[RMDB]
This 177-nucleotide RNA was probed chemically with DMS and 2A3. It was measured as part of the RMDB library OK2TRN. 2A3 adducts were read by reverse transcription with SuperScript II with manganese. The RNA was probed in 150 mM KOAc, 10 mM MgCl2 and 150 mM bicine (pH 8.5) at 24 C.
RNA sequence: GGGAACGACUCGAGUAGAGUCGAAAAGCGCAUUGGAUCUGGUCAUGGUGCAUUCCUUGCCCCGCAGUUGGGGCAGUCAUCGAAGCGCUGAUGCUCUGUGAGGAAGCGUCCGCAGCCGGCGCAAUUCUCCGAUAUCGAAGUUCGCUUCGAUAUCGGAAAAAGAAACAACAACAACAAC
Reactivity to DMS in 0.01 (KOAc 150mM, MgCl2 10mM, bicine 150mM(pH8.5), 24C), signal-to-noise 2, nucleotides 027 to 126: g020c030g030c020a070u010u020g000g000a080u010c020u000g050g000u000c030a060u010g010g010u000g010c010a180u000u000c000c000u010u000g000c010c000c000c010g010c210a160g010u010u000g010g020g010g040c000a000g000u000c060a040u000c090g010a100a080g030c050g020c160u000g010a050u000g000c090u010c040u000g030u010g010a080g000g020a030a090g000c010g000u010c000c010g000c030a100g000c000c010g000g010c020g000c030a070a090u000u000c070
Reactivity to 2A3 in 0.01 (KOAc 150mM, MgCl2 10mM, bicine 150mM(pH8.5), 24C), signal-to-noise 1, nucleotides 027 to 126: g030c000g000c080a070u150u300g050g020a100u070c020u060g060g020u110c040a090u120g030g000u000g030c070a270u060u050c000c000u030u030g030c010c010c000c010g090c070a190g110u300u170g040g000g010g010c010a000g040u030c020a030u030c000g080a100a030g020c080g010c130u050g010a010u080g000c000u000c020u140g240u150g060a010g050g040a000a040g010c000g050u020c010c000g000c030a000g040c020c010g000g010c010g020c000a010a130u060u010c000